[RMDB]
RNA sequence: GGGAACGACUCGAGUAGAGUCGAAAAAAUUUAGAUUAUCCAGGUGUAGCGGUGAAAUUCGUAGAGAUCUGGUGGAUAAUGAACCGGUGGCGAAGGCGAAAGAUUACCGCUGAAAUGCUGAAGUGAACUGAAAAGAGAAUUUCGAUUCUCUUUUCAGAAAAGAAACAACAACAACAAC
Reactivity to DMS in 0.01 (KOAc 150mM, MgCl2 10mM, bicine 150mM(pH8.5), 24C), signal-to-noise 6, nucleotides 027 to 126: a050a050u000u010u010a100g000a140u010u010a080u010c020c020a110g010g020u010g030u000a050g010c020g020g000u000g000a030a090a160u000u000c020g030u010a120g020a140g000a120u010c010u000g010g020u000g000g010a140u000a080a070u010g000a130a030c020c010g000g010u010g010g000c300g010a100a130g010g000c020g000a030a030a050g010a210u000u000a040c010c020g020c010u010g000a040a070a100u010g010c020u000g010a070a120g010u000g010a090a150
Reactivity to 2A3 in 0.01 (KOAc 150mM, MgCl2 10mM, bicine 150mM(pH8.5), 24C), signal-to-noise 2, nucleotides 027 to 126: a060a080u180u200u130a020g010a050u020u040a080u140c010c010a020g030g010u070g040u050a000g020c000g000g080u010g000a030a040a110u010u020c010g010u020a020g010a010g030a200u020c040u010g000g080u040g000g070a070u160a250a090u160g040a040a010c020c000g050g040u010g050g060c090g040a050a000g090g020c040g000a020a000a000g090a000u020u070a010c020c000g000c020u000g020a020a000a020u100g020c040u040g000a140a070g080u080g080a060a060